[RMDB]
This 177-nucleotide RNA was probed chemically with DMS and 2A3. For 2A3 the reverse transcriptase was SuperScript II with manganese. The RNA was probed in 150 mM KOAc, 10 mM MgCl2 and 150 mM bicine (pH 8.5) at 24 C. For 2A3, 1,246 sequencing reads were counted.
RNA sequence: GGGAACGACUCGAGUAGAGUCGAAAAGGGGUUCAAGCCGGGCAUGCUCAGAGACUGCAGCUCCAAAAAGAGGCUCUAGAUGAGCAGCUGUCCCAGGUCCGAGAGGCCGACCGGCACCCGGGCAGCAUGCCCCAUUAAAUUUCGAUUUAAUGGGGCAAAAAGAAACAACAACAACAAC
Reactivity to DMS in 0.01 (KOAc 150mM, MgCl2 10mM, bicine 150mM(pH8.5), 24C), signal-to-noise 4, nucleotides 027 to 126: g010g010g010g010u000u000c140a080a130g020c040c040g020g020g010c050a130u010g000c020u000c030a060g010a120g000a060c040u000g000c080a060g020c020u000c060c080a050a080a060a110a080g000a100g010g020c010u000c020u000a080g020a180u000g000a020g020c030a090g020c030u000g010u000c040c030c030a110g010g000u000c020c010g010a220g010a130g000g010c050c060g010a090c070c030g010g000c080a090c010c010c020g020g000g000c050a020g010c090a150
Reactivity to 2A3 in 0.01 (KOAc 150mM, MgCl2 10mM, bicine 150mM(pH8.5), 24C), signal-to-noise 1, nucleotides 027 to 126: g040g000g000g010u100u130c090a080a000g010c050c000g070g010g020c070a030u080g000c000u020c010a000g000a010g010a080c020u020g030c060a000g050c040u000c050c000a050a080a100a000a040g100a040g080g000c000u000c000u050a200g040a230u110g000a020g010c020a010g000c030u040g050u090c000c000c000a000g040g000u000c000c040g070a070g000a040g140g040c060c030g000a010c010c000g000g010c000a020c010c000c000g040g000g000c000a000g300c010a030